The record gives the reactivity of an RNA of 177 nucleotides to 2A3 and DMS. For 2A3 the reverse transcriptase was SuperScript II with manganese. The RNA was probed in 150 mM KOAc, 10 mM MgCl2 and 150 mM bicine (pH 8.5) at 24 C.

[RMDB]
RNA sequence: GGGAACGACUCGAGUAGAGUCGAAAAGUCGUCGUUGUACUCGUGCGAGUAAUCCACGAUCGCUACAACGCGCUAAGCAAUGGAGAUGAUUCUUGAGGGAAGCAAUUCUGCAGAGACAUCUCCACCCUCCGAUGCUGUUUUUCGAAACAGCAUCGGAAAAAGAAACAACAACAACAAC
Reactivity to 2A3 in 0.01 (KOAc 150mM, MgCl2 10mM, bicine 150mM(pH8.5), 24C), signal-to-noise 4, nucleotides 027 to 126: g230u240c060g020u020c020g000u000u000g010u000a010c000u000c020g000u000g040c200g020a030g020u150a070a210u020c000c000a000c000g000a040u120c090g000c100u000a010c000a010a000c020g020c000g000c020u100a080a020g030c040a070a150u100g010g000a000g000a000u030g060a170u140u000c010u060u060g040a160g050g030g000a080a000g050c040a030a210u030u020c000u030g040c050a010g000a000g010a010c000a000u000c010u000c000c000a000c010c000c000
Reactivity to DMS in 0.01 (KOAc 150mM, MgCl2 10mM, bicine 150mM(pH8.5), 24C), signal-to-noise 2, nucleotides 027 to 126: g000u040c000g010u020c000g000u000u010g010u000a040c000u000c000g000u000g020c300g000a050g000u060a120a200u000c050c000a020c010g000a020u010c300g000c140u030a000c010a030a010c000g010c010g020c010u000a100a110g000c160a110a250u000g040g000a000g010a040u000g010a060u040u020c000u000u000g010a170g010g010g000a060a060g000c270a150a180u000u000c000u000g060c020a210g000a000g000a020c000a010u000c000u000c000c100a030c040c000c010